Chemical mapping of a 207-nucleotide RNA with 2A3. The data come from the RNA Mapping Database (RMDB), library OK3TST. Conditions: 150 mM KOAc, 10 mM MgCl2 and 150 mM bicine (pH 8.5), 24 C.
RNA sequence: GGGAACGACUCGAGUAGAGUCGAAAAUUCAUGCUGGAACUCAUGACACGCUUUGUCUAAACGCGCCAAGAUCACUUCGAGUUCCGACCAUUUUAAAAAGACUUCAUUGGCCGUCAUAAUCCGCUCAUGCUCAGUGCCUGUCACGUCAUCUCCGAUACAAACUGACGGGUUUCGACCCGUCAGUUUGAAAAGAAACAACAACAACAAC
Reactivity to 2A3 in 0.01 (KOAc 150mM, MgCl2 10mM, bicine 150mM(pH8.5), 24C), signal-to-noise 1, nucleotides 027 to 156: u120u110c060a030u070g000c010u010g010g000a050a000c000u000c060a030u020g010a040c080a040c100g100c080u050u120u070g210u190c110u270a000a240a120c010g050c000g030c010c010a090a070g010a150u110c050a040c020u040u000c110g010a000g000u000u030c000c000g010a000c000c000a090u100u100u220u300a120a300a040a060a030g060a070c000u060u040c020a100u070u040g030g000c070c000g000u000c000a030u060a130a030u080c000c040g000c010u000c090a040u180g040c020u000c030a000g000u030g120c060c020u000g000u010c040a070c110g060u020c030a040u000c020u000c000c000g000a000u180a210